[RMDB]
RNA sequence: GGGAACGACUCGAGUAGAGUCGAAAAUGGCCCAGCAGACCAUCCUCGACCUGGUACGCCGGGUGGGGCGUAUCGCGCCACCGGAGUUCGGCGAAGAAGUGCUGCGCUGGAUGGAUGCCAGCCGGGAUCACGUAUAGGCGUUCGCGCCUAUACGUGAAAAAGAAACAACAACAACAAC
Reactivity to 2A3 in 0.01 (KOAc 150mM, MgCl2 10mM, bicine 150mM(pH8.5), 24C), signal-to-noise 1, nucleotides 027 to 126: u050g080g000c040c010c010a030g040c020a000g030a090c010c000a040u000c020c000u060c010g190a240c010c010u030g030g080u090a030c000g020c010c000g050g010g080u030g000g050g040g010c020g000u220a180u300c090g000c020g040c000c000a050c000c000g010g010a070g050u090u170c000g010g010c020g020a010a040g110a040a030g000u150g000c020u050g110c020g000c030u030g010g010a040u060g090g000a020u150g040c050c000a000g020c020c010g030g030g010a010
Reactivity to DMS in 0.01 (KOAc 150mM, MgCl2 10mM, bicine 150mM(pH8.5), 24C), signal-to-noise 1, nucleotides 027 to 126: u000g020g020c020c020c030a170g000c020a050g000a060c050c020a040u000c000c010u000c000g000a160c020c040u000g000g000u020a090c010g030c010c010g050g040g020u010g000g010g010g050c000g010u010a080u030c080g040c050g000c000c000a040c000c000g020g000a120g000u000u010c020g000g000c000g020a040a060g040a080a110g010u000g010c060u000g000c050g010c120u000g010g020a050u020g020g010a250u010g000c010c070a050g010c000c040g000g020g000a140